[RMDB]
RNA sequence: GGGAACGACUCGAGUAGAGUCGAAAAUCUGGCCCCGAAUGCCGUGGUCCCGACAUCAAUCGCCCUACUAUGCUGCAUCAGACCAACCAGCGCGGAACCUUUUUCCGAAACCAUGACGUAUUUGUGGCCACACGCAGAUAUUCGUAUCUGCGUGUGGAAAAGAAACAACAACAACAAC
Reactivity to DMS in 0.01 (KOAc 150mM, MgCl2 10mM, bicine 150mM(pH8.5), 24C), signal-to-noise 2, nucleotides 027 to 126: u000c040u010g030g000c030c030c030c040g030a010a080u010g030c050c030g000u000g000g020u010c030c020c010g000a090c100a050u000c150a080a090u000c150g000c030c020c020u020a090c150u000a070u000g020c050u000g000c040a070u000c080a070g040a090c040c060a080a090c100c040a040g030c070g030c050g000g000a050a070c080c040u060u000u000u000u000c020c010g000a100a100a150c060c020a090u000g010a040c260g030u000a070u000u000u000g030u000g000g000
Reactivity to 2A3 in 0.01 (KOAc 150mM, MgCl2 10mM, bicine 150mM(pH8.5), 24C), signal-to-noise 1, nucleotides 027 to 126: u010c040u050g040g000c010c010c020c010g110a100a040u110g000c000c000g010u010g010g070u050c040c010c000g050a060c060a050u090c060a090a070u120c070g010c020c050c020u030a080c000u050a070u160g010c010u040g020c040a050u020c060a070g000a060c000c000a050a000c000c000a010g040c020g000c020g040g050a040a060c000c040u030u120u050u180u000c010c000g050a060a020a010c030c010a020u100g050a020c040g050u050a070u110u070u070g060u070g000g000